[RMDB]
RNA sequence: GGGAACGACUCGAGUAGAGUCGAAAAACCACUAGGUUAAAUGAUCCAUAAGCUUCUUUCAGCUCUGCUGUCUGUAACCUAAUGAAAAUUGCUUAUGUGUUGGUGUCAUGUGGGAGAUAAAGAAAUACUUAGUAAAUCCCUUCGGGGAUUUACUAAGAAAAGAAACAACAACAACAAC
Reactivity to DMS in 0.01 (KOAc 150mM, MgCl2 10mM, bicine 150mM(pH8.5), 24C), signal-to-noise 2, nucleotides 027 to 126: a090c020c010a060c100u030a200g000g010u000u000a020a090a090u000g000a050u000c170c010a010u010a020a030g020c010u000u000c030u000u000u000c020a060g020c070u010c120u010g000c030u000g000u010c060u030g000u000a060a090c070c020u020a050a080u000g000a050a040a040a050u000u000g000c020u000u000a020u010g030u000g020u000u000g020g030u000g000u000c030a090u010g000u000g010g010g000a160g000a170u000a050a050a090g000a100a100a120u000a150

Description:
The data come from the RNA Mapping Database (RMDB), library OK2TST. This 177-nucleotide RNA was probed chemically with DMS. The reactions ran in a buffer of 150 mM KOAc, 10 mM MgCl2 and 150 mM bicine (pH 8.5), at 24 C. DMS adducts were read by reverse transcription with MarathonRT.